[RMDB]
RNA sequence: GGGAACGACUCGAGUAGAGUCGAAAAAGCUGGACACCGAGCACUACGUCAAGACUCUGGUGAAUCCACUGGACCAGCUCCUGACCACCGCUGGGAGACCAGAGGACGAGUUUAAGGCCUUUUACGGGUCAUUACCAUACUUCGGUAUGGUAAUGACAAAAGAAACAACAACAACAAC
Reactivity to DMS in 0.01 (KOAc 150mM, MgCl2 10mM, bicine 150mM(pH8.5), 24C), signal-to-noise 4, nucleotides 027 to 126: a040g010c050u000g000g020a250c040a030c030c020g010a050g000c070a130c080u020a080c190g020u000c100a120a060g010a180c020u000c000u010g030g020u000g010a130a190u000c020c010a060c040u020g000g000a140c010c010a060g000c080u010c040c030u010g010a050c070c040a090c100c040g010c050u000g010g010g000a180g010a170c010c010a030g010a040g010g010a080c030g020a090g000u000u000u000a080a110g000g000c020c020u010u000u010u010a130c190g000g000
Reactivity to 2A3 in 0.01 (KOAc 150mM, MgCl2 10mM, bicine 150mM(pH8.5), 24C), signal-to-noise 3, nucleotides 027 to 126: a000g020c050u010g010g000a030c010a030c050c030g000a010g050c040a070c120u210a080c050g160u080c030a070a040g050a150c020u010c070u110g020g020u040g010a010a080u020c020c000a040c090u080g010g030a020c020c020a000g000c000u000c000c010u060g030a060c000c010a020c020c050g000c040u010g030g010g000a040g040a020c020c000a020g010a020g000g010a110c010g010a020g020u040u020u120a050a030g060g040c000c010u080u150u120u150a090c100g070g080
This 177-nucleotide RNA was probed chemically with DMS and 2A3. The RNA was probed in 150 mM KOAc, 10 mM MgCl2 and 150 mM bicine (pH 8.5) at 24 C.